[RMDB]
RNA sequence: GGGAACGACUCGAGUAGAGUCGAAAAGGGUUAGCGUUCGCGCUAACCCCAGGAUCGAACAUGUCAAAUCUCGCAGACAUGAAACGAUCAAAAGCGAGAUAACUAGACAGUCAUUCGUGACUGUCAAAGAUUCAUUCAGGUUCGCCUGAAUGAAUCUAAAAGAAACAACAACAACAAC
Reactivity to 2A3 in 0.01 (KOAc 150mM, MgCl2 10mM, bicine 150mM(pH8.5), 24C), signal-to-noise 2, nucleotides 027 to 126: g020g000g000u010u000a000g000c040g020u030u060c280g020c010g000c100u010a010a010c000c000c000c000a040g080g100a060u090c030g020a020a040c000a000u000g010u000c010a080a050a240u060c060u010c050g060c020a020g020a020c010a010u040g010a100a040a020c010g030a070u090c000a050a070a020a040g040c020g000a010g020a020u090a080a080c090u030a070g000a000c000a000g010u000c000a010u080u130c160g080u030g010a010c000u000g010u000c000a000a010
Reactivity to DMS in 0.01 (KOAc 150mM, MgCl2 10mM, bicine 150mM(pH8.5), 24C), signal-to-noise 2, nucleotides 027 to 126: g000g000g000u000u000a020g000c000g030u000u000c190g020c040g040c000u000a000a010c000c000c000c060a050g010g000a060u000c000g000a120a250c050a010u000g000u000c010a080a080a080u000c010u000c020g000c010a130g000a000c010a020u000g000a040a120a140c120g000a080u000c130a040a030a100a100g000c030g010a030g000a070u000a040a080c120u000a140g010a030c000a000g000u000c000a040u000u000c210g030u000g000a010c000u000g010u000c000a030a120